[RMDB]
RNA sequence: GGGAACGACUCGAGUAGAGUCGAAAACAGGAAUUCCGGCAGGAGACAGACAAGCACAAUAUAGAUGGCGCCGACAACUGUGAUACGCGUCAACACAUAGUCUAUAUAUUCCGCCGUACGCUCACCACGCACGUAAUCAGUUCGCUGAUUACGUGCGAAAAGAAACAACAACAACAAC
Reactivity to DMS in 0.01 (KOAc 150mM, MgCl2 10mM, bicine 150mM(pH8.5), 24C), signal-to-noise 1, nucleotides 027 to 126: c200a110g000g000a130a170u000u000c130c000g030g000c040a050g030g010a110g000a030c110a040g000a050c080a090a090g000c150a100c200a040a040u000a010u000a050g000a110u000g010g000c010g010c050c050g060a230c300a060a150c060u030g000u010g000a100u030a170c300g000c040g010u000c040a090a080c200a110c060a010u000a090g000u000c050u000a000u000a000u000a100u000u000c060c050g030c040c050g010u030a090c180g010c010u000c030a060c130c040a030
Reactivity to 2A3 in 0.01 (KOAc 150mM, MgCl2 10mM, bicine 150mM(pH8.5), 24C), signal-to-noise 1, nucleotides 027 to 126: c030a010g100g040a050a020u140u050c010c000g010g030c120a150g010g050a010g020a040c010a050g090a050c030a080a080g080c080a030c040a190a010u100a000u010a090g070a050u030g000g000c000g000c040c020g000a020c000a160a070c190u160g040u110g160a000u050a140c000g000c010g050u000c000a070a100c030a020c000a080u120a050g000u010c000u000a030u020a000u000a020u230u000c020c000g040c000c000g020u050a000c080g050c040u020c020a010c000c020a020
Structure probing data (DMS and 2A3) for a 177-nucleotide construct.
Values cover nucleotides 27 to 126.
It was measured as part of the RMDB library OK2TST.
For 2A3, 904 sequencing reads were counted.
For 2A3 the reverse transcriptase was SuperScript II with manganese.
In probing experiments dimethyl sulfate is read out at A N1 and C N3, which are open when not base-paired.